[RMDB]
RNA sequence: GGGAACGACUCGAGUAGAGUCGAAAAGUUACGUGGAAUGCUCCGAAGCCAAAACAAAGGAGACCAGAAAGGAAAAGGUGAAUACCAAAGAUCUUAGGGAGAUCAAGUGCAGGGUCACCGGUACGAGACCUAAACAGCACUUCGGUGCUGUUUAGGUAAAAGAAACAACAACAACAAC
Reactivity to DMS in 0.01 (KOAc 150mM, MgCl2 10mM, bicine 150mM(pH8.5), 24C), signal-to-noise 2, nucleotides 027 to 126: g030u000u000a120c200g000u000g000g010a100a060u000g040c050u000c040c000g000a180a180g000c020c100a100a100a060a170c070a050a130a200g000g000a050g000a100c000c040a140g000a100a070a100g000g020a080a070a130a110g010g000u010g010a050a010u020a230c000c000a040a110a070g000a040u080c020u020u000a160g010g030g010a130g020a040u020c010a070a150g050u020g040c090a040g000g020g000u010c040a040c010c010g020g000u000a000c200g010a120g000
Reactivity to 2A3 in 0.01 (KOAc 150mM, MgCl2 10mM, bicine 150mM(pH8.5), 24C), signal-to-noise 1, nucleotides 027 to 126: g060u070u150a060c080g060u070g030g050a160a080u050g020c000u000c020c010g040a060a060g000c060c080a090a060a060a130c050a030a190a040g020g010a020g000a000c000c030a040g170a100a080a030g080g030a000a010a040a050g000g000u040g040a060a000u120a180c050c000a010a110a000g000a020u000c030u080u090a040g000g070g130a030g010a010u030c010a030a070g140u080g160c020a020g000g050g020u000c020a020c040c050g000g030u020a010c020g020a010g070